[RMDB]
RNA sequence: GGGAACGACUCGAGUAGAGUCGAAAAUUUGGCGACGGUGACAUUGGCUUCUGCUUCAUUCAACUGGGUGCGCGCGGUGUCGUAAUCCUGACGGCUAACAUAGUUGGUCUUCAGCAACGAUGCCUGGCAAUUGAUUUCAUUUCGAUGAAAUCAAUUGAAAAGAAACAACAACAACAAC
Reactivity to 2A3 in 0.01 (KOAc 150mM, MgCl2 10mM, bicine 150mM(pH8.5), 24C), signal-to-noise 3, nucleotides 027 to 126: u070u020u080g030g000c040g010a030c030g050g010u040g000a040c040a060u040u080g040g010c000u070u020c020u080g010c000u050u110c040a080u100u100c010a080a060c050u040g070g030g000u070g010c070g000c010g000c030g000g020u010g010u000c010g000u010a020a050u030c000c000u000g010a000c010g000g000c000u000a010a010c020a250u300a160g020u000u010g010g010u000c000u010u000c010a010g000c010a020a030c010g010a010u020g000c010c000u010g090g020
Reactivity to DMS in 0.01 (KOAc 150mM, MgCl2 10mM, bicine 150mM(pH8.5), 24C), signal-to-noise 9, nucleotides 027 to 126: u010u010u000g010g010c030g010a070c100g010g010u000g010a080c110a090u010u000g010g010c040u000u000c060u000g010c060u000u000c080a100u000u000c100a070a120c090u010g010g010g020u000g000c090g010c070g010c100g010g010u000g010u000c010g010u000a060a110u010c200c000u000g000a020c040g010g000c000u000a010a020c020a140u010a140g010u000u000g010g010u000c010u000u000c010a020g010c280a130a040c020g000a020u000g000c010c010u010g020g020

Chemical mapping of a 177-nucleotide RNA with 2A3 and DMS. Values are in units of 0.01, from 0 to 300, in steps of 10. It was measured as part of the RMDB library OK2TST. For DMS the reverse transcriptase was MarathonRT. The DMS profile rests on 26,869 reads. In probing experiments dimethyl sulfate is read out at A N1 and C N3, which are open when not base-paired.